An RNA of 177 nucleotides, treated with 2A3 and DMS and read out base by base. For DMS, 11,791 sequencing reads were counted. The 2A3 profile rests on 4,897 reads. Conditions: 150 mM KOAc, 10 mM MgCl2 and 150 mM bicine (pH 8.5), 24 C. It was measured as part of the RMDB library OK2TRN.

[RMDB]
RNA sequence: GGGAACGACUCGAGUAGAGUCGAAAACUAACUGGUUAUGUGGCUGCGGACAAAGAUGCACUACUUGUGGCAGAACAAGUCAUGGGGCAGUUAGAUUUUUUAAUCGCAAAAGCGAGAUAUAGUAGAAUAUAUCAAUAGUAUUCGUACUAUUGAUAUAAAAAGAAACAACAACAACAAC
Reactivity to 2A3 in 0.01 (KOAc 150mM, MgCl2 10mM, bicine 150mM(pH8.5), 24C), signal-to-noise 5, nucleotides 027 to 126: c010u010a020a010c020u040g270g260u250u100a300u250g040u020g030g000c020u020g020c090g090g030a060c050a030a130a030g070a060u090g010c020a010c050u220a100c030u120u150g050u090g110g000c010a010g010a100a050c030a080a020g000u000c010a030u030g020g000g040g040c010a000g000u020u020a020g010a030u000u010u000u000u040u240a070a060u010c000g000c030a110a190a240a110g010c010g020a000g030a030u110a020u070a180g040u030a050g030a200a030
Reactivity to DMS in 0.01 (KOAc 150mM, MgCl2 10mM, bicine 150mM(pH8.5), 24C), signal-to-noise 8, nucleotides 027 to 126: c010u010a030a030c020u000g010g000u000u010a080u000g030u000g010g010c030u000g010c090g020g020a170c150a070a080a090g010a160u000g010c050a050c050u000a090c180u000u000g030u010g010g010c030a050g000a110a090c090a090a050g010u000c030a020u000g010g010g000g000c010a010g000u000u000a010g000a020u000u000u000u010u000u010a060a160u000c010g020c010a090a080a120a160g020c010g010a010g000a100u000a050u000a090g000u000a120g010a100a130
Values are in units of 0.01, from 0 to 300, in steps of 10.